[RMDB]
RNA sequence: GGGAACGACUCGAGUAGAGUCGAAAAGAAAUAAGCGCGCGAGGGGAAGGGGAAAAGCGACGUUUCUUCUUUUUGUCGCGAAAACCCGAAAGGCGAUGAAAUCGCCUGAAAAGCGCGCGAUAAGAAAGGGAUAUCUUUUGUUCGCAAAAGAUAUCCCAAAAGAAACAACAACAACAAC
Reactivity to 2A3 in 0.01 (KOAc 150mM, MgCl2 10mM, bicine 150mM(pH8.5), 24C), signal-to-noise 1, nucleotides 027 to 126: g180a010a140a040u120a050a040g000c000g000c050g000c070g000a140g000g160g020g070a150a220g030g000g010g020a010a010a010a010g000c000g000a000c080g020u000u000u000c030u060u000c000u000u050u020u040u040g000u000c040g000c030g000a040a000a000a000c000c000c000g000a000a000a040g000g000c000g000a030u010g020a000a000a300u050c010g000c000c000u000g010a000a100a000a010g000c000g010c000g000c000g000a010u000a000a000g090a020a210a020
Reactivity to DMS in 0.01 (KOAc 150mM, MgCl2 10mM, bicine 150mM(pH8.5), 24C), signal-to-noise 3, nucleotides 027 to 126: g010a110a120a110u010a160a170g000c000g020c000g000c010g030a120g000g020g030g010a100a110g000g030g000g020a040a040a100a200g000c020g010a020c010g000u010u020u030c080u020u010c040u000u010u010u020u090g010u000c010g030c000g000a020a060a100a120c010c000c010g040a060a110a000g030g000c000g040a020u010g050a040a100a300u000c000g010c000c010u010g000a030a040a090a300g000c000g010c000g030c000g010a010u030a050a130g000a030a090a120
Chemical mapping of a 177-nucleotide RNA with 2A3 and DMS.